[RMDB]
RNA sequence: GGGAACGACUCGAGUAGAGUCGAAAAUGGGCUGCUCUGUCUCCAUCAACAGGCAUACUACUGUUAAAGAGCCCUCCUUAUUCAAUCCGAACAUCAGAUGUGUGAAUCUGAUCACAUUUGAGGACGGCCUGAGAGAACUAUCAGUGAUACAGAGUCAGAAACAGCACUCUUUCGAGAGUGCUGUUUCAAAAGAAACAACAACAACAAC
Reactivity to 2A3 in 0.01 (KOAc 150mM, MgCl2 10mM, bicine 150mM(pH8.5), 24C), signal-to-noise 1, nucleotides 027 to 156: u070g040g000g010c000u030g000c000u000c010u000g020u050c030u040c080c020a120u130c050a030a060c010a000g040g020c100a100u170a160c030u010a030c000u040g010u090u120a170a140a030g080a100g060c010c030c000u020c000c000u070u110a140u010u260c040a000a060u000c000c050g020a070a060c010a120u010c010a020g000a030u020g070u020g080u040g150a060a120u120c070u130g010a010u030c030a010c010a000u010u020u020g000a010g010g000a010c040g050g000c020c000u050g010a040g010a010g000a070a030c010u040a150u110c040a080g010u080g090a000u010a060c050a040g010a000g120u080c050a010
An RNA of 207 nucleotides, treated with 2A3 and read out base by base. For 2A3 the reverse transcriptase was SuperScript II with manganese. The data come from the RNA Mapping Database (RMDB), library OK3TST. The reactions ran in a buffer of 150 mM KOAc, 10 mM MgCl2 and 150 mM bicine (pH 8.5), at 24 C.